[RMDB]
RNA sequence: GGGAACGACUCGAGUAGAGUCGAAAAACUGCCUUCGGGCAGUCGUAUUGAUAUGGACUUCGAUAAGUGCUGGGAGGUACUAAUCUCGGAAACGAGAUGUACCGAAGAACAGCACUUUUGACGAAGUCCUAAGUCUAGCAGCACCAUUCGUGGUGAAAACCCAUUCUGAAUUCGUUCAGAAUGGGUUAAAAGAAACAACAACAACAAC
Reactivity to DMS in 0.01 (KOAc 150mM, MgCl2 10mM, bicine 150mM(pH8.5), 24C), signal-to-noise 3, nucleotides 027 to 156: a030c010u000g020c010c000u010u000c300g070g050g040c000a000g040u020c040g010u000a080u000u000g010a090u000a300u000g030g010a020c020u000u010c010g030a210u000a040a050g030u000g010c000u010g000g020g020a270g020g040u000a010c020u000a070a100u000c000u000c000g000g000a130a090a280c010g020a010g020a060u000g010u000a000c020c000g000a080a120g010a120a170c010a000g020c010a010c000u000u000u000u000g000a280c120g020a040a020g000u000c000c010u000a000a030g000u000c050u010a160g020c040a160g000c000a020c000c000a100u010u020c190g010u000g000g000u000g010a040a040
Reactivity to 2A3 in 0.01 (KOAc 150mM, MgCl2 10mM, bicine 150mM(pH8.5), 24C), signal-to-noise 3, nucleotides 027 to 156: a000c000u010g000c000c000u030u070c260g050g010g010c000a000g010u010c030g040u080a190u170u240g030a010u010a040u110g000g010a010c000u020u000c000g030a050u010a100a040g000u000g000c020u010g020g010g030a040g000g000u010a010c010u070a080a110u010c000u000c000g020g050a070a080a070c010g000a000g000a020u020g000u000a000c000c000g020a050a000g000a000a000c000a000g020c010a000c000u010u000u000u020g100a080c010g000a000a000g000u000c000c000u000a000a010g000u010c000u030a040g040c070a010g020c010a030c030c000a000u140u110c250g120u100g060g000u080g090a150a260
Structure probing data (DMS and 2A3) for a 207-nucleotide construct. For 2A3, 2,667 sequencing reads were counted. For DMS, 6,342 sequencing reads were counted. The RNA was probed in 150 mM KOAc, 10 mM MgCl2 and 150 mM bicine (pH 8.5) at 24 C. 2A3 adducts were read by reverse transcription with SuperScript II with manganese.